[RMDB]
RNA sequence: GGGAACGACUCGAGUAGAGUCGAAAAGAUAUGGAUGAUGGACAUGCGAUUAGAGAUCGGAAACGAUCUAUUCUCGCAACAGCCCGCUCAUCCUAAGUCAAAACUCCCUUCGUUCGCGAAGGGAGAACUCACAAUUAAGGUUCGCCUUAAUUGUGAGAAAAGAAACAACAACAACAAC
Reactivity to DMS in 0.01 (KOAc 150mM, MgCl2 10mM, bicine 150mM(pH8.5), 24C), signal-to-noise 6, nucleotides 027 to 126: g010a060u000a300u000g010g000a010u000g000a030u000g020g010a020c040a230u000g000c000g000a010u000u000a010g010a010g010a000u000c010g010g010a110a110a240c010g000a010u000c000u000a040u000u000c040u000c000g010c000a020a060c290a130g010c010c000c000g020c200u000c000a010u000c000c000u000a050a120g000u000c040a080a090a140a140c010u000c000c000c000u000u010c000g010u000u010c220g030c010g010a010a000g000g000g000a000g000a010a040
Reactivity to 2A3 in 0.01 (KOAc 150mM, MgCl2 10mM, bicine 150mM(pH8.5), 24C), signal-to-noise 5, nucleotides 027 to 126: g030a030u100a030u150g000g010a010u000g010a020u250g010g010a030c060a110u120g000c010g010a000u000u020a010g010a000g000a040u000c000g010g040a060a060a010c010g000a010u010c000u000a030u020u010c010u010c000g000c010a030a090c050a070g040c000c000c000g010c020u000c000a010u000c010c000u020a180a030g040u030c040a010a020a080a230c000u000c010c000c000u000u000c040g030u040u050c300g000c010g090a000a000g010g020g000a000g000a000a000
Chemical mapping of a 177-nucleotide RNA with DMS and 2A3.
As a SHAPE reagent, 2A3 marks flexible, mostly unpaired nucleotides at the ribose 2'-OH.
2A3 adducts were read by reverse transcription with SuperScript II with manganese.